Notes
The record gives the reactivity of an RNA of 177 nucleotides to DMS and 2A3. Values are in units of 0.01, from 0 to 300, in steps of 10. The RNA was probed in 150 mM KOAc, 10 mM MgCl2 and 150 mM bicine (pH 8.5) at 24 C.
RNA sequence: GGGAACGACUCGAGUAGAGUCGAAAACGGAGCGGGGACGCUGGGGAGUACCUGUGCGAUGCGCCCCAGGACAGCCGCAUCUUCCUUGUCAGCGUGGAAGGUAACAGUGUACCCCUCACACCCUGUGCAGGGAAUGGGUUUUCGAACCCAUUCCCUGAAAAGAAACAACAACAACAAC
Reactivity to DMS in 0.01 (KOAc 150mM, MgCl2 10mM, bicine 150mM(pH8.5), 24C), signal-to-noise 2, nucleotides 027 to 126: c120g020g020a220g060c040g030g020g000g010a060c180g020c110u010g030g010g010g020a090g000u000a030c000c020u000g010u000g030c110g030a110u010g000c030g000c030c020c060c060a030g000g010a100c170a140g000c130c040g000c050a060u000c030u020u000c010c000u000u000g030u000c080a100g030c120g050u000g010g000a090a070g010g000u020a110a110c020a030g000u020g020u000a030c040c050c000c000u000c020a060c020a150c010c000c000u000g000u000g000
Reactivity to 2A3 in 0.01 (KOAc 150mM, MgCl2 10mM, bicine 150mM(pH8.5), 24C), signal-to-noise 1, nucleotides 027 to 126: c060g050g010a070g020c060g000g060g030g110a160c090g000c140u010g050g000g010g010a020g000u030a070c000c010u000g020u100g090c030g070a060u100g050c080g040c000c020c000c000a020g040g050a030c030a010g130c070c070g000c030a000u030c010u070u000c020c060u050u030g110u040c100a090g040c120g100u090g040g010a060a020g030g030u070a070a030c010a000g030u060g010u300a070c000c010c000c040u030c020a080c000a000c000c000c000u030g000u080g020